Chemical mapping of a 207-nucleotide RNA with DMS and 2A3. For 2A3, 7,204 sequencing reads were counted. The DMS profile rests on 19,742 reads. It was measured as part of the RMDB library OK3TST.
RNA sequence: GGGAACGACUCGAGUAGAGUCGAAAAGGUGUUUGCAAGCAGUCGGGCACUGCAACUGCAUCUGCAUCGGUUCAGUAUAUUAUAUGAACCGACCGUUCACCUGACUGGUUCCGAUUCCUGUCUGAGUGCAUGGGGCGGACAGGCCGCCAUCGUCGGAUAAUUAAAUCUAGUUCGCUAGAUUUAAUUAAAAAGAAACAACAACAACAAC
Reactivity to DMS in 0.01 (KOAc 150mM, MgCl2 10mM, bicine 150mM(pH8.5), 24C), signal-to-noise 5, nucleotides 027 to 156: g010g020u000g000u000u000u010g030c010a080a180g010c000a020g010u000c020g030g030g050c080a160c060u000g000c020a060a080c000u000g020c020a100u010c070u000g030c070a120u000c010g020g020u000u000c000a040g020u000a190u000a150u000u000a160u010a110u000g000a010a010c010c010g010a010c030c060g020u000u000c050a030c010c010u000g030a300c050u000g010g010u000u000c020c030g010a130u000u010c010c010u000g000u000c040u000g000a120g020u000g020c050a090u010g020g010g020g030c030g020g000a100c060a070g010g010c090c030g020c020c020a070u000c080g010u000c030g010g000a240
Reactivity to 2A3 in 0.01 (KOAc 150mM, MgCl2 10mM, bicine 150mM(pH8.5), 24C), signal-to-noise 7, nucleotides 027 to 156: g030g000u040g030u070u140u110g080c070a100a100g000c010a010g010u040c080g080g070g000c090a020c060u030g020c050a090a050c040u040g020c010a050u040c040u100g030c020a060u020c010g020g010u000u000c010a020g070u040a120u040a120u300u220a170u120a050u150g010a010a000c000c000g000a010c010c040g040u050u070c010a010c020c000u010g020a040c020u050g010g040u060u030c020c020g020a060u100u120c010c000u010g020u020c020u040g080a080g110u090g000c020a100u140g030g000g040g040c010g020g000a030c000a040g060g040c020c010g030c010c020a060u090c020g060u010c010g000g010a020